[RMDB]
Source information
The data come from the RNA Mapping Database (RMDB), library M2PK50. An RNA of 177 nucleotides, treated with 2A3 and DMS and read out base by base. Reactivities are given for positions 27 through 126.
RNA sequence: GGGAACGACUCGAGUAGAGUCGAAAAGGAGCUUGAUUCGUCAAGCUCCAAAAGUUACAGACCCGAUUCCUAGGCUAAACAAGAAGCUAUGCACCGAGGCAAAAAGGAAUGGAUUCGUCCAUUCCAAGCCUACCGUAUACUUCGGUAUACGGUAGGCAAAAGAAACAACAACAACAAC
Reactivity to 2A3 in 0.01 (KOAc 150mM, MgCl2 10mM, bicine 150mM(pH8.5), 24C), signal-to-noise 1, nucleotides 027 to 126: g000g000a000g000c000u000u000g020a020u060u010c020g050u010c020a000a000g020c000u000c000c000a000a000a000a000g020u030u080a040c050a080g060a130c020c010c000g020a080u050u020c010c020u010a050g030g000c020u110a040a080a040c060a060a060g150a060a010g050c030u030a020u100g020c020a020c020c040g010a020g090g000c060a000a000a000a070a070g010g010a000a030u020g000g000a010u000u050c200g020u000c020c020a030u020u000c000c000a020a000
Reactivity to DMS in 0.01 (KOAc 150mM, MgCl2 10mM, bicine 150mM(pH8.5), 24C), signal-to-noise 1, nucleotides 027 to 126: g040g010a010g000c000u000u000g000a030u010u020c210g010u010c010a050a010g030c020u010c010c000a020a010a090a100g000u000u040a080c170a050g000a170c060c020c030g010a130u010u000c050c040u020a100g010g000c050u000a030a090a150c120a030a110g000a050a030g010c050u000a020u000g050c060a040c040c080g000a050g000g010c100a010a060a020a080a070g010g000a000a000u000g000g000a040u000u020c170g010u000c010c000a020u000u000c000c000a040a090

For 2A3, 1,420 sequencing reads were counted.